[RMDB]
The data come from the RNA Mapping Database (RMDB), library OK3TST. An RNA of 207 nucleotides, treated with DMS and 2A3 and read out base by base.

RNA sequence: GGGAACGACUCGAGUAGAGUCGAAAAUUUUCAUUUCUAUUGGACAUAUGCCUAUGAAUAGAAUUACUGAGUCAUAUAGUAACUCUGUGUUUAGCAUUUUGAGGAACUGCCAGAUUGUUUUCCAACAUGGCGUCACCAUUUUACAUUCUCGCCUGCAGUCCAGGCUAAUAUUCGUAUUAGCCUGGACAAAAGAAACAACAACAACAAC
Reactivity to DMS in 0.01 (KOAc 150mM, MgCl2 10mM, bicine 150mM(pH8.5), 24C), signal-to-noise 1, nucleotides 027 to 156: u010u030u000u010c040a170u000u020u000c020u010a230u010u020g030g010a150c060a090u010a050u000g020c020c050u000a120u010g010a040a020u000a050g020a060a020u000u010a000c010u000g020a200g050u000c240a120u000a190u010a040g020u000a020a010c010u000c010u020g050u010g020u020u000u010a030g050c020a060u010u010u010u000g010a140g020g010a090a100c100u000g040c010c050a090g030a210u000u000g030u000u010u000u000c070c000a100a050c050a060u010g030g000c020g000u010c040a040c100c060a140u010u000u000u010a080c070a120u000u010c040u000c030g000c030c060u010g010c050a220
Reactivity to 2A3 in 0.01 (KOAc 150mM, MgCl2 10mM, bicine 150mM(pH8.5), 24C), signal-to-noise 2, nucleotides 027 to 156: u080u010u040u080c040a030u040u140u020c030u180a170u120u120g020g020a020c000a060u150a020u140g020c020c020u080a060u150g040a060a040u110a080g030a050a050u080u020a060c030u040g020a010g060u070c060a060u160a050u060a220g040u030a050a070c000u000c000u020g010u000g020u070u090u140a040g020c010a010u020u050u020u250g080a030g050g020a060a040c020u040g010c030c030a050g050a200u110u090g090u020u110u060u050c040c000a040a000c010a090u060g010g050c000g020u040c020a020c030c000a020u050u060u080u060a080c060a040u050u070c030u050c060g070c040c080u030g050c020a000
For DMS the reverse transcriptase was MarathonRT. 2A3 adducts were read by reverse transcription with SuperScript II with manganese.